[RMDB]
RNA sequence: GGGAACGACUCGAGUAGAGUCGAAAAACGUGGUCGCAUUUCAGUCAGGGCCGCCGUAAUUAGCUAUGUGCACUUCAGGUUGCUGGCAUUCUAAUUCGAGGGCAGUGAAGGGCGCGGGGUUCGUCGCGAUGGGGGACGGAUUCGUCCGUCCCCCAUCAAAAGAAACAACAACAACAAC
Reactivity to DMS in 0.01 (KOAc 150mM, MgCl2 10mM, bicine 150mM(pH8.5), 24C), signal-to-noise 1, nucleotides 027 to 126: a090c160g050u020g030g010u050c010g000c060a130u030u040u030c060a080g000u000c050a060g000g000g000c050c000g020c080c000g000u050a030a020u010u020a060g000c120u010a030u000g030u000g000c010a020c030u000u060c150a120g030g000u020u010g000c000u000g000g000c030a060u040u000c020u000a000a020u000u020c070g000a120g000g000g000c000a020g010u000g010a070a150g010g010g020c080g020c000g000g000g000g000u020u000c050g040u020c060g000c250
Reactivity to 2A3 in 0.01 (KOAc 150mM, MgCl2 10mM, bicine 150mM(pH8.5), 24C), signal-to-noise 2, nucleotides 027 to 126: a000c040g030u020g040g030u000c030g000c030a060u050u060u070c040a090g060u070c090a080g040g060g030c000c020g020c010c000g120u060a070a050u010u050a020g040c100u100a050u130g100u080g000c000a000c020u120u180c120a070g110g000u030u020g000c020u040g090g050c000a010u020u020c020u070a090a120u070u040c060g040a090g010g030g030c060a020g060u010g130a020a090g030g000g000c050g000c030g000g010g030g000u000u060c010g020u040c040g040c000
An RNA of 177 nucleotides, treated with DMS and 2A3 and read out base by base. For DMS the reverse transcriptase was MarathonRT. The 2A3 profile rests on 765 reads. The RNA was probed in 150 mM KOAc, 10 mM MgCl2 and 150 mM bicine (pH 8.5) at 24 C. It was measured as part of the RMDB library OK1LIB.